[RMDB]
RNA sequence: GGGAACGACUCGAGUAGAGUCGAAAAGAGCUGUCAGUGGACAGCUCACGAUCCGUGAGGAUCGAAACCUGGCAUCGCGACUAUAGGGGCACAAACCCGCCAGGGAGUCUAAUCUUAAAGUUCAGUGGAACGUAGAUUAGUCUCAAUAUAGCGCGUACGCACUACGUGCGUUCGCGCACGUAGUGCGAAAAGAAACAACAACAACAAC
Reactivity to DMS in 0.01 (KOAc 150mM, MgCl2 10mM, bicine 150mM(pH8.5), 24C), signal-to-noise 1, nucleotides 027 to 156: g010a040g040c000u010g010u000c030a300g040u040g040g010a060c000a000g010c000u010c010a050c030g000a000u010c000c000g030u020g000a300g000g000a000u000c010g030a080a060a130c010c010u000g030g000c030a110u000c010g010c030g020a120c020u010a090u000a120g040g020g020g000c080a140c110a070a120a060c000c010c000g020c040c020a050g010g000g000a020g020u020c000u000a010a020u000c010u010u000a040a050a080g000u000u000c010a300g000u030g000g010a000a020c010g010u010a050g010a050u000u000a030g000u000c000u000c020a080a080u000a040u000a060g010c040g030c010g000u000a280
Reactivity to 2A3 in 0.01 (KOAc 150mM, MgCl2 10mM, bicine 150mM(pH8.5), 24C), signal-to-noise 2, nucleotides 027 to 156: g010a000g000c000u020g000u010c030a170g130u160g100g240a000c000a000g010c010u000c000a000c000g000a010u010c000c010g000u050g040a080g000g000a000u000c000g000a060a010a010c000c000u000g000g000c010a060u090c020g000c000g030a100c020u010a010u010a030g000g000g010g000c110a030c040a100a120a020c010c000c010g000c000c000a000g000g010g000a000g010u010c000u010a000a000u000c000u010u130a160a190a040g000u000u010c070a070g100u130g300g000a000a000c000g050u030a000g000a000u000u000a000g000u000c000u000c000a000a000u010a000u000a010g000c010g000c000g020u010a010
An RNA of 207 nucleotides, treated with DMS and 2A3 and read out base by base. For DMS the reverse transcriptase was MarathonRT. The 2A3 profile rests on 1,858 reads.